Structure probing data (DMS and 2A3) for a 177-nucleotide construct. For 2A3, 1,597 sequencing reads were counted. For 2A3 the reverse transcriptase was SuperScript II with manganese. Conditions: 150 mM KOAc, 10 mM MgCl2 and 150 mM bicine (pH 8.5), 24 C. It was measured as part of the RMDB library TTRDEL.
RNA sequence: GGGAACGACUCGAGUAGAGUCGAAAAGAUAUGGAAAUUAUACUUCGCAUAGCGAUCUCGGAAACGAGUAGCUAUGAACUACGAAGUAAUUUCCUAAGUCAAACACUACUCGUUCGCGAGUAGUGAACAGCAACGAAAAGUUCGCUUUUCGUUGCUGAAAAGAAACAACAACAACAAC
Reactivity to DMS in 0.01 (KOAc 150mM, MgCl2 10mM, bicine 150mM(pH8.5), 24C), signal-to-noise 1, nucleotides 027 to 126: g020a000u000a300u000g000g010a000a000a010u000u020a140u020a050c020u000u000c000g020c000a050u000a010g000c000g000a180u000c000u000c010g000g000a150a070a200c010g010a020g020u000a300g000c000u000a010u000g010a060a100c140u000a300c110g020a000a000g000u000a000a000u010u000u000c000c010u010a030a090g000u000c020a180a100a270c000a000c000u000a000c000u000c000g000u000u000c260g050c010g010a000g000u000a000g010u000g020a020a170
Reactivity to 2A3 in 0.01 (KOAc 150mM, MgCl2 10mM, bicine 150mM(pH8.5), 24C), signal-to-noise 1, nucleotides 027 to 126: g000a020u010a040u110g020g100a020a000a020u080u100a200u160a190c000u000u000c010g030c090a000u020a000g000c030g120a260u200c000u020c020g040g020a090a070a050c020g000a000g000u010a020g050c000u000a000u000g010a000a040c070u180a040c040g000a000a040g010u000a020a020u000u010u000c000c000u000a100a000g050u000c030a000a050a100c000a000c000u000a000c010u010c000g030u120u040c300g010c000g150a000g000u010a000g000u010g000a020a020